[RMDB]
RNA sequence: GGGAACGACUCGAGUAGAGUCGAAAAAGUUGCGUGGUUUAAGACUACAUUUGGUGUGUCAACCAUCUGUGAUUUCUACCAGGUGACGGAUUUGGGCUAUAGAAGUUCGUUUUGUAAUGGAAGUAUGUAGUUUUAAAUAUUUCGAUAUUUAAAACUAAAAAGAAACAACAACAACAAC
Reactivity to 2A3 in 0.01 (KOAc 150mM, MgCl2 10mM, bicine 150mM(pH8.5), 24C), signal-to-noise 2, nucleotides 027 to 126: a000g010u010u030g040c110g060u030g060g010u030u090u110a040a000g020a010c020u010a000c090a020u000u000u080g000g000u030g000u040g170u170c060a060a000c000c000a000u000c010u000g020u000g050a080u030u140u000c020u000a030c000c010a030g080g040u000g010a010c000g000g000a010u030u000u020g010g010g000c000u010a000u050a110g040a120a010g070u180u080c010g010u000u030u010u120g090u080a090a180u190g080g040a030a030g080u080a070u250g040
Reactivity to DMS in 0.01 (KOAc 150mM, MgCl2 10mM, bicine 150mM(pH8.5), 24C), signal-to-noise 6, nucleotides 027 to 126: a170g000u000u000g010c020g000u000g010g010u000u000u010a050a050g020a050c140u000a020c000a020u000u000u000g020g010u000g000u010g010u010c300a130a040c010c000a010u000c030u020g040u000g010a070u010u000u000c080u000a040c010c010a030g020g040u000g010a010c020g000g010a300u000u000u000g010g010g000c030u000a050u000a070g000a100a030g000u010u010c020g010u000u000u000u010g010u010a070a060u010g010g010a080a110g000u010a060u020g010

The record gives the reactivity of an RNA of 177 nucleotides to 2A3 and DMS.
The data come from the RNA Mapping Database (RMDB), library OK2TRN.
For DMS the reverse transcriptase was MarathonRT.
Reactivities are given for positions 27 through 126.
Conditions: 150 mM KOAc, 10 mM MgCl2 and 150 mM bicine (pH 8.5), 24 C.